[RMDB]
Conditions: 150 mM KOAc, 10 mM MgCl2 and 150 mM bicine (pH 8.5), 24 C. This 207-nucleotide RNA was probed chemically with 2A3. Reactivities are given for positions 27 through 156. For 2A3, 421 sequencing reads were counted. The data come from the RNA Mapping Database (RMDB), library OK3TST.
RNA sequence: GGGAACGACUCGAGUAGAGUCGAAAAGCUGGCUGGCUGCAGACAUCUUCAUGAGAACAGCAGGUACCUUGGUGCAUGAUAACAGGCCAGGUUAUAUUCUCAUCCUCGCCCUCAUAAAGAUACAGGUCUACCGUCUCUGAAACCUUUGGGCUAGAUACGACACUAGCAGUUUCGACUGCUAGUGUCGAAAAGAAACAACAACAACAAC
Reactivity to 2A3 in 0.01 (KOAc 150mM, MgCl2 10mM, bicine 150mM(pH8.5), 24C), signal-to-noise 1, nucleotides 027 to 156: g050c020u050g070g000c020u000g000g020c030u000g000c020a030g130a110c030a070u030c000u090u010c010a040u160g020a020g050a180a030c050a040g020c050a010g050g050u020a030c020c000u040u190g020g000u080g070c070a090u090g110a060u050a150a070c020a130g040g040c000c000a020g020g000u050u050a060u000a060u080u150c100u020c000a090u110c000c000u000c030g010c000c000c000u030c000a090u210a130a120a000g030a000u100a090c000a000g110g060u070c000u000a030c040c000g000u000c000u000c000u040g030a090a100a060c050c010u060u050u040g000g010g000c000u020a020g000a070u170a060